[RMDB]
Source: RMDB library M2RFPK, as collected in RNAgym.
This 207-nucleotide RNA was probed chemically with DMS and 2A3.
For DMS, 1,697 sequencing reads were counted.
The reactions ran in a buffer of 150 mM KOAc, 10 mM MgCl2 and 150 mM bicine (pH 8.5), at 24 C.
RNA sequence: GGGAACGACUCGAGUAGAGUCGAAAAAUGGGAGUUAGUCUACUCGCUAUCCUAGUUACUUUGGAGUAAUCUAAAGUGUGUGUAAACGGGCGAAAGUCUGUAAAAUACUGGGGACAUAGGGUCAACAAGAACUAGUAGACCUUCGGGUCUACUAGAAACAGUGUCACAUCUUCGGAUGUGACACUGUAAAAGAAACAACAACAACAAC
Reactivity to DMS in 0.01 (KOAc 150mM, MgCl2 10mM, bicine 150mM(pH8.5), 24C), signal-to-noise 1, nucleotides 027 to 156: a050u000g020g000g000a150g000u020u000a060g010u000c080u000a040c000u000c020g030c040u000a050u000c000c010u000a190g000u000u000a020c070u000u010u020g020g000a040g020u010a100a130u000c010u000a000a010a000g030u000g020u020g000u000g000u000a050a160a080c000g000g000g000c000g000a130a080a210g040u000c000u000g020u000a070a070a090a080u000a040c070u000g020g030g030g010a110c090a070u000a040g000g040g000u020c030a090a130c070a090a080g000a130a150c000u000a020g020u000a030g010a030c020c000u000u000c300g060g010g000u000c000u000a010c000u020a000g030a050a040
Reactivity to 2A3 in 0.01 (KOAc 150mM, MgCl2 10mM, bicine 150mM(pH8.5), 24C), signal-to-noise 1, nucleotides 027 to 156: a000u070g000g050g000a040g010u070u030a040g030u080c030u070a040c020u080c050g050c030u020a010u080c000c000u050a060g040u040u090a000c010u000u000u000g000g000a020g050u070a120a110u030c010u030a010a000a020g060u080g000u020g000u000g020u140a200a050a000c030g000g020g000c000g030a050a070a000g000u030c020u020g080u110a000a080a040a030u130a050c030u070g000g000g000g000a000c050a070u130a060g090g010g030u030c000a000a010c050a170a000g050a080a040c000u010a010g000u000a010g000a000c000c000u070u020c170g010g000g030u000c010u000a000c000u000a000g010a000a010